[RMDB]
RNA sequence: GGGAACGACUCGAGUAGAGUCGAAAAGAUAUGGAAACUUUGACAUGCGAGACACUCGGAAACGAGUGUAUCGCAACAGCAUGGUUUCCUAAGUCAAAAGCUCUGCGGAGUUCGCUCCGCAGAGCAACAUUAGCGUCUUGUUCGCAAGACGCUAAUGAAAAGAAACAACAACAACAAC
Reactivity to DMS in 0.01 (KOAc 150mM, MgCl2 10mM, bicine 150mM(pH8.5), 24C), signal-to-noise 2, nucleotides 027 to 126: g020a010u000a190u000g000g000a000a010a020c000u000u000u000g000a050c040a300u010g000c000g010a000g010a020c000a000c020u000c000g000g010a080a030a130c000g000a020g010u010g000u000a000u000c000g030c010a040a020c150a060g000c010a000u000g000g000u000u000u000c010c000u000a020a090g010u000c020a090a120a160a170g020c010u000c000u010g010c000g020g010a020g020u000u010c230g010c000u010c000c000g000c000a000g000a000g020c010a010a030
Reactivity to 2A3 in 0.01 (KOAc 150mM, MgCl2 10mM, bicine 150mM(pH8.5), 24C), signal-to-noise 1, nucleotides 027 to 126: g010a010u050a020u080g000g000a020a000a000c010u070u030u000g080a110c070a180u300g010c000g000a010g000a020c000a010c010u000c000g060g000a050a050a030c000g000a000g000u010g010u000a010u010c010g000c020a040a000c020a000g000c000a000u010g040g000u010u000u000c000c010u010a060a000g020u000c020a060a000a100a110g000c000u020c000u000g000c030g010g010a030g000u060u140c220g110c080u020c000c000g030c010a000g000a000g000c000a010a010
Overview: The record gives the reactivity of an RNA of 177 nucleotides to DMS and 2A3. For DMS, 2,179 sequencing reads were counted. The reactions ran in a buffer of 150 mM KOAc, 10 mM MgCl2 and 150 mM bicine (pH 8.5), at 24 C. It was measured as part of the RMDB library TTRDEL. For 2A3 the reverse transcriptase was SuperScript II with manganese.